[RMDB]
RNA sequence: GGGAACGACUCGAGUAGAGUCGAAAAGAUAUGGAGUUUCUACAUGUUCGACGAAGUGCUUCGGAAACGAAGCACAGAGAAUGCAUGUAGAGAACUCCUAAGUCAAAGGAGAAGUUCGCUUCUCCAACGAAUUACACUCCUUCGGGAGUGUAAUUCGAAAAGAAACAACAACAACAAC
Reactivity to 2A3 in 0.01 (KOAc 150mM, MgCl2 10mM, bicine 150mM(pH8.5), 24C), signal-to-noise 1, nucleotides 027 to 126: g050a030u070a010u140g000g000a010g010u030u110u010c000u040a000c070a040u010g040u060u300c300g140a150c010g000a130a010g000u020g000c020u000u000c000g000g020a020a070a040c000g000a000a010g030c040a010c030a000g010a000g000a060a090u300g060c000a000u000g000u000a000g010a000g010a010a010c000u000c000c000u000a030a040g010u010c030a140a000a130g010g020a020g020a070a030g020u110u300c300g020c200u010u040c030u000c000c000a030a000
Reactivity to DMS in 0.01 (KOAc 150mM, MgCl2 10mM, bicine 150mM(pH8.5), 24C), signal-to-noise 2, nucleotides 027 to 126: g000a050u000a300u030g000g000a000g020u000u000u000c000u010a000c000a010u000g010u010u010c240g030a290c030g020a300a300g010u000g010c000u010u000c010g000g000a110a070a120c000g010a010a010g030c000a000c010a000g000a300g000a030a140u000g050c000a010u000g010u010a030g000a000g010a040a030c000u010c000c000u010a030a080g010u000c030a050a180a190g060g010a030g010a050a000g020u000u030c300g000c010u010u000c000u000c010c020a090a090

Chemical mapping of a 177-nucleotide RNA with 2A3 and DMS. In probing experiments dimethyl sulfate is read out at A N1 and C N3, which are open when not base-paired. It was measured as part of the RMDB library TTRDES. High 2A3 reactivity points to a flexible backbone, as in loops and unpaired stretches. DMS adducts were read by reverse transcription with MarathonRT.